RNA sequence: GGGAACGACUCGAGUAGAGUCGAAAAUCUUGUUGCCCAGACUGGAGUGCAAUGACGUGAUCUUGGUUCACUGCAGCCUCUGGCUCCCGGGUUAAAGCAAUUCUUCUGUCUCAUCCUCCUGAGUAGCUGGGAUUGCAGGCACCAGCAACCACGCCUGAUUUCUGUUAACUUUCGAGUUAACAGAAAUAAAAGAAACAACAACAACAAC
Reactivity to DMS in 0.01 (KOAc 150mM, MgCl2 10mM, bicine 150mM(pH8.5), 24C), signal-to-noise 2, nucleotides 027 to 156: u010c030u000u000g000u000u010g020c020c030c050a070g030a100c030u000g030g010a110g020u000g030c040a060a050u010g020a090c040g040u000g020a080u000c070u000u000g000g030u010u000c020a060c020u000g010c030a080g000c020c020u020c020u000g010g020c010u010c030c020c030g010g000g030u000u010a050a070a120g000c030a040a100u000u010c100u000u000c040u000g010u000c040u010c020a090u000c070c040u000c050c050u000g010a090g010u000a060g010c080u000g030g020g000a050u000u000g030c030a060g030g030c070a100c040c000a100g010c010a060a060c020c040a060c060g020c010c000u000g000
Reactivity to 2A3 in 0.01 (KOAc 150mM, MgCl2 10mM, bicine 150mM(pH8.5), 24C), signal-to-noise 4, nucleotides 027 to 156: u060c020u020u110g050u060u060g030c000c000c000a010g030a030c050u050g030g050a040g030u100g030c080a100a160u130g060a080c050g060u080g080a110u090c050u100u170g100g000u140u080c030a020c060u070g030c010a050g030c000c050u030c010u020g020g010c030u000c020c030c020g000g000g030u060u100a090a050a020g040c010a020a070u050u030c020u110u060c040u080g130u030c010u010c020a120u080c020c080u070c010c010u050g020a010g040u040a020g030c040u040g010g010g040a050u020u070g000c020a010g040g000c010a030c020c000a010g050c020a010a030c030c020a030c050g030c000c010u060g050